[RMDB]
RNA sequence: GGGAACGACUCGAGUAGAGUCGAAAAGACAAGGGCGAGGUCGAACAGGCCGCGUCGCAGGGCGCCGAGCAGCCGGCCGCGUCGACGGACAACGGCACCGCGGACGCCGAGCAGGCCGACGCCGCGACUGCGCAGGUCGAGGCCGACAAGGCUGCAGCGUGCAAGUCGUGUUCGCACGACUUGCACGAAAAGAAACAACAACAACAAC
Reactivity to 2A3 in 0.01 (KOAc 150mM, MgCl2 10mM, bicine 150mM(pH8.5), 24C), signal-to-noise 1, nucleotides 027 to 156: g060a040c040a000a050g060g000g020c050g000a020g000g020u040c010g000a220a000c100a080g080g000c000c000g010c000g040u040c000g020c010a000g030g020g010c020g040c000c010g020a020g030c000a010g000c030c000g000g040c000c020g010c000g070u080c050g020a160c000g020g000a020c020a270a030c070g070g020c060a020c060c020g050c000g030g020a040c030g010c000c020g000a040g000c040a030g000g100c000c000g000a050c010g000c000c000g030c000g000a020c110u190g040c080g010c060a110g040g000u000c000g020a070g020g000c020c000g000a020c070a080a000g010g000c010u000g000c000a010g020
The record gives the reactivity of an RNA of 207 nucleotides to 2A3. Values cover nucleotides 27 to 156. The reactions ran in a buffer of 150 mM KOAc, 10 mM MgCl2 and 150 mM bicine (pH 8.5), at 24 C. Source: RMDB library OK3TST, as collected in RNAgym.